This 177-nucleotide RNA was probed chemically with DMS and 2A3. 2A3 adducts were read by reverse transcription with SuperScript II with manganese. The DMS profile rests on 2,597 reads.
RNA sequence: GGGAACGACUCGAGUAGAGUCGAAAAUGCGUUGGCCCGAGAAGAUAGUCGCCACCUUUACGGUCUUUCAGGCGGAAUAGGGAAUCACCGUAUUCGGUCCAACGAUGUGUCUGCUCAUAUGGCUCACUCCCCUAGAGCUAUUCGUAGCUCUAGGGGAAAAAGAAACAACAACAACAAC
Reactivity to DMS in 0.01 (KOAc 150mM, MgCl2 10mM, bicine 150mM(pH8.5), 24C), signal-to-noise 3, nucleotides 027 to 126: u000g020c010g000u000u000g000g000c030c000c010g000a030g030a090a100g000a080u010a150g010u010c020g010c030c090a140c130c030u000u010u000a030c050g000g030u000c110u000u010u000c050a100g020g000c080g000g010a090a160u000a110g000g010g010a040a050u000c160a030c000c000g010u000a110u010u000c020g000g000u000c000c020a000a010c010g000a040u020g000u010g000u000c020u020g010c030u000c070a100u010a060u020g010g010c020u010c050a120c140
Reactivity to 2A3 in 0.01 (KOAc 150mM, MgCl2 10mM, bicine 150mM(pH8.5), 24C), signal-to-noise 1, nucleotides 027 to 126: u210g020c010g010u000u030g000g030c000c000c020g040a020g000a010a050g050a030u170a080g050u050c000g040c040c000a030c010c000u080u100u160a100c110g000g030u010c030u070u160u120c070a030g060g000c040g050g020a110a040u070a100g050g000g080a070a120u090c020a030c080c000g000u040a130u020u050c000g000g000u000c010c020a000a010c020g000a010u060g030u030g010u020c040u030g070c030u020c080a110u140a060u170g040g000c020u020c030a060c030
DMS adducts were read by reverse transcription with MarathonRT. Conditions: 150 mM KOAc, 10 mM MgCl2 and 150 mM bicine (pH 8.5), 24 C. It was measured as part of the RMDB library OK2TRN.